[RMDB]
RNA sequence: GGGAACGACUCGAGUAGAGUCGAAAAUAAGGCUGGAGAAGAGGCACCUGGAUGUAGGGAUGCCCACAGUAACUACUAGAAACCUCGCUACAUCCAACACUACCAGUGCCCCAGAACUUGGGCUCGACUGCUCCCCCUUCAGGCCUGCGAGGUAUGAGAACUAGUAGGGAUUCGUCCCUACUAGUUCAAAAGAAACAACAACAACAAC
Reactivity to DMS in 0.01 (KOAc 150mM, MgCl2 10mM, bicine 150mM(pH8.5), 24C), signal-to-noise 1, nucleotides 027 to 156: u000a040a050g000g000c010u010g040g030a070g000a070a010g010a170g030g010c030a030c050c070u010g010g040a150u000g010u010a060g060g030g010a080u000g040c000c010c060a170c040a060g000u010a120a120c090u000a100c070u000a180g010a140a110a040c010c020u000c040g020c000u000a090c010a070u000c000c000a090a130c070a040c040u010a080c030c020a060g000u000g000c020c010c030c040a100g000a070a060c050u010u010g020g010g000c050u010c050g020a120c020u000g020c050u030c000c010c020c030c050u010u000c010a090g000g000c040c020u010g000c030g020a040g030g030u020a040u010g010a300

The record gives the reactivity of an RNA of 207 nucleotides to DMS. Source: RMDB library OK3TST, as collected in RNAgym. For DMS, 2,204 sequencing reads were counted. Values cover nucleotides 27 to 156. DMS adducts were read by reverse transcription with MarathonRT.